Structure probing data (2A3 and DMS) for a 177-nucleotide construct. Values cover nucleotides 27 to 126. The reactions ran in a buffer of 150 mM KOAc, 10 mM MgCl2 and 150 mM bicine (pH 8.5), at 24 C. For DMS, 46,144 sequencing reads were counted.

[RMDB]
RNA sequence: GGGAACGACUCGAGUAGAGUCGAAAAGAUAUGGAAUCGAUCCCAUUCGGAGGCCACAGUCGGAAACGACUGAAUGGCCUGAAUGGGAGUCGAUUCCUAAGUCAAAGUGUCGCGUUCGCGCGACACACAUACAGUGUUAGUUCGCUAACACUGUAUGAAAAGAAACAACAACAACAAC
Reactivity to 2A3 in 0.01 (KOAc 150mM, MgCl2 10mM, bicine 150mM(pH8.5), 24C), signal-to-noise 9, nucleotides 027 to 126: g030a030u090a070u180g000g000a000a010u010c010g020a020u020c030c010c020a000u010u020c060g300g060a060g050g010c000c010a010c010a010g000u000c010g000g050a110a090a100c020g000a000c000u000g010a050a150u040g000g000c000c000u000g000a000a000u000g000g010g020a020g090u030c000g000a000u000u000c000c000u000a060a010g040u010c070a110a060a150g000u010g000u000c010g010c020g030u050u110c300g010c010g000c000g140a000c000a000c000a000
Reactivity to DMS in 0.01 (KOAc 150mM, MgCl2 10mM, bicine 150mM(pH8.5), 24C), signal-to-noise 9, nucleotides 027 to 126: g010a060u010a300u010g010g000a010a000u000c000g010a150u000c000c000c000a010u000u000c000g030g010a070g020g000c000c000a060c000a010g010u000c000g010g000a140a120a220c010g010a020c000u000g000a100a110u000g010g010c000c000u000g000a010a010u000g000g000g010a020g020u000c000g010a010u000u000c000c000u000a010a090g010u000c040a100a130a160g010u000g010u000c000g010c000g020u000u010c240g020c010g030c000g000a000c000a000c000a090